[RMDB]
RNA sequence: GGGAACGACUCGAGUAGAGUCGAAAAGAUAUGGAGGCAGGGAGGACCCAAGCUACUAAUCGGAAACGAUUAAACUUGCCAUCGAUCUGCCUCCUAAGUCAAAGAUCGAUAGUUCGCUAUCGAUCAACCCUAUGAGUAAGUUCGCUUACUCAUAGGGAAAAGAAACAACAACAACAAC
Reactivity to DMS in 0.01 (KOAc 150mM, MgCl2 10mM, bicine 150mM(pH8.5), 24C), signal-to-noise 9, nucleotides 027 to 126: g010a030u000a290u010g010g000a020g000g010c010a010g000g000g010a300g010g000a150c250c300c060a040a030g010c010u010a090c120u000a000a000u000c010g010g000a070a070a120c010g000a010u000u000a000a040a060c060u000u000g010c060c090a100u020c020g000a300u010c000u000g000c010c000u000c000c000u000a010a050g010u000c020a080a120a100g000a010u000c000g000a020u000a010g020u010u020c260g020c000u010a000u000c000g010a000u000c000a040a080
Reactivity to 2A3 in 0.01 (KOAc 150mM, MgCl2 10mM, bicine 150mM(pH8.5), 24C), signal-to-noise 9, nucleotides 027 to 126: g000a010u020a020u070g000g000a000g000g000c010a000g030g010g010a060g030g050a120c060c090c060a030a000g000c000u040a050c020u010a020a010u010c000g010g020a030a020a010c010g010a010u030u050a230a300a090c140u120u150g020c020c030a140u180c010g000a010u010c000u000g000c000c000u000c000c000u000a010a000g000u010c020a030a080a110g000a010u010c000g000a000u000a010g030u070u030c300g000c220u010a000u000c000g000a000u000c000a000a000
Source: RMDB library TTRDEL, as collected in RNAgym. Structure probing data (DMS and 2A3) for a 177-nucleotide construct. The RNA was probed in 150 mM KOAc, 10 mM MgCl2 and 150 mM bicine (pH 8.5) at 24 C. For DMS the reverse transcriptase was MarathonRT.